The record gives the reactivity of an RNA of 177 nucleotides to 2A3 and DMS. Values cover nucleotides 27 to 126. The data come from the RNA Mapping Database (RMDB), library TTRDES.
RNA sequence: GGGAACGACUCGAGUAGAGUCGAAAAGAUAUGGAAGCCUGAUAGACAUGGCUGAACGUCGGAAACGACGUACAGCCAACAGCUAUAGGCUUCCUAAGUCAAAGUUAUGGAGUUCGCUCCAUAACAAGUAACACUACAACUUCGGUUGUAGUGUUACAAAAGAAACAACAACAACAAC
Reactivity to 2A3 in 0.01 (KOAc 150mM, MgCl2 10mM, bicine 150mM(pH8.5), 24C), signal-to-noise 3, nucleotides 027 to 126: g020a000u020a020u060g000g000a000a000g000c000c020u070g170a070u010a000g040a030c170a290u300g010g000c010u010g000a030a000c000g010u010c000g000g000a010a000a000c010g010a000c000g010u000a030c000a010g000c000c000a050a050c050a020g000c000u000a000u020a010g000g000c020u000u010c000c000u000a010a000g000u000c020a180a000a120g020u010u010a010u010g010g000a010g010u070u160c290g130c170u000c000c000a000u000a000a000c000a000a020
Reactivity to DMS in 0.01 (KOAc 150mM, MgCl2 10mM, bicine 150mM(pH8.5), 24C), signal-to-noise 3, nucleotides 027 to 126: g010a000u000a030u010g000g000a030a020g020c000c000u000g030a040u000a000g020a050c150a150u010g020g010c000u010g010a040a010c000g010u010c000g000g000a010a010a050c010g020a010c010g000u000a070c000a020g000c000c000a060a060c180a160g000c000u000a010u000a040g000g000c010u010u000c000c000u010a010a070g000u010c000a160a130a170g000u000u010a000u000g000g000a030g010u000u010c300g010c000u010c000c000a010u000a000a000c000a080a120

High DMS reactivity at an A or C suggests that its Watson-Crick edge is free. For DMS, 4,627 sequencing reads were counted.